[RMDB]
RNA sequence: GGGAACGACUCGAGUAGAGUCGAAAAGAUAUGGAAAUCCAAUGAUGGUGAACUACUUGCUGGACUCGGAAACGAGUCCAUCAAGCACUUGAGGAUUUCCUAAGUCAAAACUUCCGUUCGCGGAAGACAUGUAUCAGCUCUUCGGAGCUGAUACAUGAAAAGAAACAACAACAACAAC
Reactivity to 2A3 in 0.01 (KOAc 150mM, MgCl2 10mM, bicine 150mM(pH8.5), 24C), signal-to-noise 2, nucleotides 027 to 126: g000a000u050a050u160g000g030a000a030a000u000c050c010a090a300u280g030a050u130g070g090u010g000a040a110c050u160a060c000u300u040g000c020u010g000g010a000c000u000c020g040g040a030a060a060c000g010a020g020u000c010c040a000u010c000a000a000g000c000a000c000u000u000g040a070g020g000a000u000u010u000c000c000u000a110a010g050u010c010a020a070a200a220c000u010u030c040c000g060u050u060c300g000c020g140g030a000a000g010a130
Reactivity to DMS in 0.01 (KOAc 150mM, MgCl2 10mM, bicine 150mM(pH8.5), 24C), signal-to-noise 2, nucleotides 027 to 126: g020a020u000a300u000g000g000a010a010a000u000c000c010a170a190u000g010a150u000g010g020u000g000a080a080c100u030a300c000u000u000g000c080u000g000g000a030c000u000c000g000g010a090a070a230c000g000a000g000u000c000c010a010u000c000a000a000g000c000a010c000u010u000g000a130g000g000a030u000u000u000c000c000u000a030a120g000u010c020a140a080a140a200c000u000u000c010c000g000u000u010c200g030c010g020g000a000a000g000a180
The record gives the reactivity of an RNA of 177 nucleotides to 2A3 and DMS. For DMS the reverse transcriptase was MarathonRT. The RNA was probed in 150 mM KOAc, 10 mM MgCl2 and 150 mM bicine (pH 8.5) at 24 C. The data come from the RNA Mapping Database (RMDB), library TTRDES.